Chemical mapping of a 177-nucleotide RNA with 2A3 and DMS. It was measured as part of the RMDB library OK2TRN. The reactions ran in a buffer of 150 mM KOAc, 10 mM MgCl2 and 150 mM bicine (pH 8.5), at 24 C. Values are in units of 0.01, from 0 to 300, in steps of 10. For 2A3, 1,443 sequencing reads were counted. DMS adducts were read by reverse transcription with MarathonRT.
RNA sequence: GGGAACGACUCGAGUAGAGUCGAAAAAGUGUCUCAUCUCACAAAUAUAUUGUGGUGAAUGAUGGCCAUGUUCUCCAGUUGAUAAUGGCCCCUGGAGCCGAGUGGUUGGAGUUCAGUCCCCACUUGGACCAAGUGAACCAUUCGUGGUUCACUUGGUAAAAGAAACAACAACAACAAC
Reactivity to 2A3 in 0.01 (KOAc 150mM, MgCl2 10mM, bicine 150mM(pH8.5), 24C), signal-to-noise 2, nucleotides 027 to 126: a000g120u090g020u000c000u010c010a000u020c010u000c000a010c000a050a060a000u280a020u050a170u250u030g020u010g030g070u060g100a230a130u060g020a040u160g010g000c050c020a120u170g090u100u020c000u000c010c000a050g020u140u130g170a150u100a300a090u100g090g000c000c000c000c020u020g000g000a000g000c010c000g000a010g020u040g000g100u140u220g020g020a120g010u220u160c090a030g060u060c020c000c010c020a040c000u000u030g010g030
Reactivity to DMS in 0.01 (KOAc 150mM, MgCl2 10mM, bicine 150mM(pH8.5), 24C), signal-to-noise 2, nucleotides 027 to 126: a110g010u010g010u000c010u000c000a020u000c020u000c000a010c010a010a040a220u010a160u010a130u000u000g010u000g020g020u010g000a110a040u000g000a010u030g040g020c010c020a070u010g020u010u000c000u000c020c020a030g000u020u000g010a150u010a100a070u010g000g010c000c020c040c040u000g010g010a070g000c020c010g000a050g020u000g010g000u000u000g010g010a060g010u010u000c250a170g010u000c000c000c000c040a020c020u000u000g010g010